Record summary
Structure probing data (DMS and 2A3) for a 177-nucleotide construct. For DMS, 777 sequencing reads were counted.
[RMDB]
RNA sequence: GGGAACGACUCGAGUAGAGUCGAAAAGAUAUGGAUGAGCAUGGAAGCAUGAUGACCUCGGAAACGAGCAAGUGCCCAUGUAGUCAUCCUAAGUCAAAAUCUAUGAUUCGUUCGCGAAUCAUAGAAACGCUAAGAUGGUCUUCGGACCAUCUUAGCGAAAAGAAACAACAACAACAAC
Reactivity to DMS in 0.01 (KOAc 150mM, MgCl2 10mM, bicine 150mM(pH8.5), 24C), signal-to-noise 1, nucleotides 027 to 126: g040a010u020a300u010g000g000a010u000g000a010g000c030a010u000g000g010a110a090g020c000a000u000g000a070u040g010a070c300c020u000c010g010g050a090a090a250c010g000a000g000c040a070a110g020u000g040c030c000c000a000u000g000u000a010g000u000c000a000u000c000c000u000a020a090g000u000c090a010a050a090a040u000c000u000a000u020g030a090u000u000c000g000u000u020c200g030c010g010a010a000u000c000a000u000a010g000a000a030a150
Reactivity to 2A3 in 0.01 (KOAc 150mM, MgCl2 10mM, bicine 150mM(pH8.5), 24C), signal-to-noise 1, nucleotides 027 to 126: g040a010u080a030u120g070g000a000u040g010a000g060c000a000u000g000g030a260a120g010c010a010u030g080a120u150g040a190c020c010u000c010g030g050a070a050a040c010g010a030g000c050a140a140g010u010g010c010c010c020a000u020g020u040a020g080u010c000a000u000c010c000u000a090a010g030u040c050a070a000a070a260u040c000u000a010u000g000a000u000u000c000g010u030u030c280g030c010g220a000a020u070c000a000u000a000g020a010a080a000
DMS adducts were read by reverse transcription with MarathonRT.